Chemical mapping of a 177-nucleotide RNA with DMS and 2A3. Values cover nucleotides 27 to 126. Source: RMDB library TTRDES, as collected in RNAgym. For 2A3 the reverse transcriptase was SuperScript II with manganese.

[RMDB]
RNA sequence: GGGAACGACUCGAGUAGAGUCGAAAAAAAGAUAUGGAGCUAGGGAGCUGGACCGUGGCGAAGAACUUCGCUCGGAAACGAGCGAAGGGAGCCAUUAGUACAGCGAAGAACUAGCUCCUAAGUCAAAGUCUAAACUCUAGUUCGCUAGAGUUUAGACAAAAGAAACAACAACAACAAC
Reactivity to DMS in 0.01 (KOAc 150mM, MgCl2 10mM, bicine 150mM(pH8.5), 24C), signal-to-noise 2, nucleotides 027 to 126: a040a100a060g000a060u000a300u010g000g000a030g040c000u000a010g000g000g020a140g000c020u010g010g000a040c180c120g040u000g010g000c000g020a130a130g000a150a180c000u000u000c000g020c000u010c000g020g000a100a110a170c010g000a030g020c000g010a020a000g030g000g000a080g010c000c010a000u000u010a040g010u010a070c000a000g010c000g010a080a110g000a130a180c000u000a000g010c000u000c000c000u000a010a050g020u000c030a060a120a170
Reactivity to 2A3 in 0.01 (KOAc 150mM, MgCl2 10mM, bicine 150mM(pH8.5), 24C), signal-to-noise 1, nucleotides 027 to 126: a010a000a020g040a000u070a040u200g000g010a000g020c000u000a000g060g000g020a050g000c000u000g020g000a020c000c040g030u000g040g000c030g260a240a050g020a050a040c000u010u000c010g000c000u010c000g000g000a040a080a040c000g000a020g020c000g000a000a000g000g000g000a000g020c000c000a000u030u100a030g000u000a010c010a010g000c000g230a280a010g010a020a030c000u000a010g010c000u000c010c000u000a160a020g010u020c020a090a090a040